Structure probing data (2A3 and DMS) for a 177-nucleotide construct. DMS adducts were read by reverse transcription with MarathonRT.

[RMDB]
RNA sequence: GGGAACGACUCGAGUAGAGUCGAAAAGAAAGAAGAUGUAAUCCAUUAGUUUUAUAUUUUACCCAUUUAGGGCUGAUUUAUUACUACACACAGCAGUGCAACAUCUGUCAGUACUUCUGGUGCUUAAGCAAAGUUCUAUUUUCGAAUAGAACUUUGCAAAAGAAACAACAACAACAAC
Reactivity to 2A3 in 0.01 (KOAc 150mM, MgCl2 10mM, bicine 150mM(pH8.5), 24C), signal-to-noise 5, nucleotides 027 to 126: g150a010a090a010g090a030a020g040a040u090g010u060a030a080u020c030c030a050u040u010a010g020u020u000u090u030a120u030a120u060u070u060u210a090c010c000c020a080u100u100u190a080g000g000g000c020u000g010a020u030u010u030a000u000u040a010c040u030a010c020a000c020a000c020a010g020c010a000g020u030g030c040a080a050c010a100u100c060u130g120u080c060a030g010u020a010c010u000u020c010u000g040g000u040g010c040u070u090a060a000
Reactivity to DMS in 0.01 (KOAc 150mM, MgCl2 10mM, bicine 150mM(pH8.5), 24C), signal-to-noise 3, nucleotides 027 to 126: g000a150a090a040g010a040a030g020a060u010g000u000a080a070u020c080c070a070u010u010a040g010u000u010u010u020a010u010a030u000u020u000u040a130c060c070c070a170u000u010u010a070g010g000g020c080u010g010a040u000u000u010a020u000u000a020c010u020a100c130a090c040a030c130a120g030c060a020g000u000g000c110a120a090c090a050u010c060u010g000u000c050a060g010u040a100c030u000u000c030u000g010g020u000g000c030u010u010a020a200

The data come from the RNA Mapping Database (RMDB), libraries RFM100 and RFMREP.
For 2A3 the reverse transcriptase was SuperScript II with manganese.
Conditions: 150 mM KOAc, 10 mM MgCl2 and 150 mM bicine (pH 8.5), 24 C.